[RMDB]
RNA sequence: GGGAACGACUCGAGUAGAGUCGAAAAGAACGCCACUUCGGUGGCGUUCGAAGAUCUACCACACGUAGAUCACUAUCGUGUGAGACAUCGAUAGAUGACAAAUGGUCCGGAAGUUCGCUUCCGGAAAACACAAGAAGUGUUUCGACACUUCUUGUGUAAAAGAAACAACAACAACAAC
Reactivity to DMS in 0.01 (KOAc 150mM, MgCl2 10mM, bicine 150mM(pH8.5), 24C), signal-to-noise 6, nucleotides 027 to 126: g000a000a010c010g010c000c000a010c000u000u010c160g040g010u000g010g020c000g020u000u000c000g000a100a090g000a030u000c010u010a030c010c090a150c280a140c140g010u010a000g000a040u010c040a280c020u000a010u000c000g020u010g000u000g000a220g010a260c100a030u010c010g000a040u000a020g000a130u000g010a090c160a060a050a110u000g010g000u000c000c000g000g000a030a020g020u010u010c200g000c010u000u000c000c000g000g000a000a010a080
Reactivity to 2A3 in 0.01 (KOAc 150mM, MgCl2 10mM, bicine 150mM(pH8.5), 24C), signal-to-noise 5, nucleotides 027 to 126: g000a000a010c000g000c010c000a010c030u040u070c240g090g010u000g000g010c000g000u000u000c000g000a000a000g000a000u000c010u010a020c000c080a120c030a010c200g000u000a000g000a060u020c010a010c020u010a010u030c020g000u010g010u030g100a210g040a070c030a060u090c030g020a010u020a030g120a080u120g050a030c090a080a130a070u170g160g040u010c000c000g000g000a020a020g010u050u170c200g030c110u000u000c000c000g000g000a020a020a000
Chemical mapping of a 177-nucleotide RNA with DMS and 2A3. Reactivities are given for positions 27 through 126. For DMS, 6,539 sequencing reads were counted. For 2A3 the reverse transcriptase was SuperScript II with manganese. The data come from the RNA Mapping Database (RMDB), library M2PK50.